[RMDB]
RNA sequence: GGGAACGACUCGAGUAGAGUCGAAAAUCUUCCUCUAGUUUCUUGAUCUUCUUCUUGGCCUUCCGGAGAUCCUUCUCGAGAUCAUCCACUAACUUUCUUGCAUUGACCCACUGCUCGAGGACUCCUUCAAUUGUUACAAGUUCGCUUGUAACAAUUGAAAAGAAACAACAACAACAAC
Reactivity to 2A3 in 0.01 (KOAc 150mM, MgCl2 10mM, bicine 150mM(pH8.5), 24C), signal-to-noise 3, nucleotides 027 to 126: u000c000u060u020c010c000u000c040u020a060g030u040u090u020c030u070u080g030a060u020c010u050u010c010u070u020c010u070u060g050g000c010c000u060u030c050c040g030g000a050g010a050u030c020c000u100u080c070u020c050g140a140g010a040u020c020a090u000c020c010a030c040u050a090a050c020u030u080u070c030u040u060g030c020a100u000u100g010a010c000c000c020a040c050u010g000c000u000c010g000a000g010g020a030c010u000c000c000u010u030
Reactivity to DMS in 0.01 (KOAc 150mM, MgCl2 10mM, bicine 150mM(pH8.5), 24C), signal-to-noise 2, nucleotides 027 to 126: u020c160u000u000c020c010u010c220u000a100g020u010u000u000c010u010u010g000a130u000c040u010u010c020u010u000c020u000u000g010g010c050c030u000u000c020c080g030g010a150g010a060u010c010c030u000u010c050u000c100g000a130g010a070u000c040a090u000c030c020a130c080u000a060a080c030u000u010u000c010u000u010g030c100a160u000u010g000a070c030c010c090a080c020u000g000c000u000c010g020a030g000g000a130c090u000c020c010u000u010